[RMDB]
RNA sequence: GGGAACGACUCGAGUAGAGUCGAAAAAAAAAAAGAUAUGGAUCCUACGCUCGAGGAUCGUAUAAAAGUCUAUAUCGGAAACGAUAUAGUCGCUAUACGGGAGAGCGAGGAUCCUAAGUCAAAAAAACUUGUUAAAUACGUUCGCGUAUUUAACAAGAAAAGAAACAACAACAACAAC
Reactivity to DMS in 0.01 (KOAc 150mM, MgCl2 10mM, bicine 150mM(pH8.5), 24C), signal-to-noise 1, nucleotides 027 to 126: a000a000a010a130a100a080a150g000a000u000a300u000g010g010a000u020c000c020u000a170c030g030c000u000c020g000a020g010g010a040u000c000g000u000a000u000a020a070a160a110g000u000c010u030a000u000a000u000c000g010g000a100a050a170c020g020a010u000a000u000a010g010u000c020g010c300u000a000u000a020c030g000g030g000a030g000a000g000c010g030a070g010g000a000u000c000c000u000a000a030g000u030c010a000a000a120a100a030a070a090

The record gives the reactivity of an RNA of 177 nucleotides to DMS. For DMS the reverse transcriptase was MarathonRT. Reactivities are given for positions 27 through 126. For DMS, 1,044 sequencing reads were counted.